[RMDB]
RNA sequence: GGGAACGACUCGAGUAGAGUCGAAAAACCACGAGGCUGGAAAAUGUCAUGUGGAAGCAAAUAACCAACGAGCUAAACUAUGUUCUCUGGGAAGGAGGACAUGACCUCACUGUAGUGGCUGGGGAUGUAAAAGCCCACGAUUCGUCGUGGGCUUUUAAAAAGAAACAACAACAACAAC
Reactivity to DMS in 0.01 (KOAc 150mM, MgCl2 10mM, bicine 150mM(pH8.5), 24C), signal-to-noise 1, nucleotides 027 to 126: a120c010c010a000c000g000a020g000g000c050u010g010g010a140a040a050a130u000g010u000c000a180u000g030u000g040g010a080a130g010c130a090a110a060u010a120a150c030c030a050a100c190g000a040g030c030u000a030a040a030c170u020a000u000g000u000u000c000u000c000u000g040g020g020a200a090g020g010a010g010g000a000c000a000u010g010a060c030c000u000c030a080c020u000g010u010a090g050u000g020g020c300u000g000g000g000g020a080u000g020
This 177-nucleotide RNA was probed chemically with DMS. For DMS the reverse transcriptase was MarathonRT. The reactions ran in a buffer of 150 mM KOAc, 10 mM MgCl2 and 150 mM bicine (pH 8.5), at 24 C. It was measured as part of the RMDB library OK2TST. The DMS profile rests on 794 reads.